Structure probing data (DMS and 2A3) for a 177-nucleotide construct. 2A3 adducts were read by reverse transcription with SuperScript II with manganese.
RNA sequence: GGGAACGACUCGAGUAGAGUCGAAAAAUAAAUUGUCAUAUCUGGAUCCAACAGUUAAUCCAUGUGAUGGUGUAUACUGUGGUAUGGCGUAAAACAUCGGAGAAAGUACAAAAGUACAAAAAAAAAAGAUACAUACCUACUUCGGUAGGUAUGUAUCAAAAGAAACAACAACAACAAC
Reactivity to DMS in 0.01 (KOAc 150mM, MgCl2 10mM, bicine 150mM(pH8.5), 24C), signal-to-noise 1, nucleotides 027 to 126: a040u040a080a040a080u000u000g040u000c000a040u000a020u000c010u000g020g020a080u000c030c030a140a100c000a000g000u000u000a190a230u000c030c010a000u000g030u000g030a030u010g010g000u000g000u010a100u040a010c020u000g020u000g020g000u000a000u000g000g010c000g040u000a050a060a060a040c100a080u020c160g000g000a130g020a100a080a090g010u000a010c030a060a120a060a160g020u000a000c000a000a000a020a000a000a040a040a160a140a230
Reactivity to 2A3 in 0.01 (KOAc 150mM, MgCl2 10mM, bicine 150mM(pH8.5), 24C), signal-to-noise 2, nucleotides 027 to 126: a000u150a020a090a040u080u010g010u000c000a010u000a040u010c050u090g280g040a050u020c020c000a010a010c000a010g000u000u000a060a050u000c010c040a050u130g150u150g300a100u010g000g020u000g000u010a040u010a030c000u000g040u050g000g000u000a010u010g000g000c000g010u040a050a130a000a000c040a060u100c040g000g030a000g060a090a120a000g050u070a030c050a110a300a100a010g010u030a010c070a060a040a150a000a010a010a000a020a000a080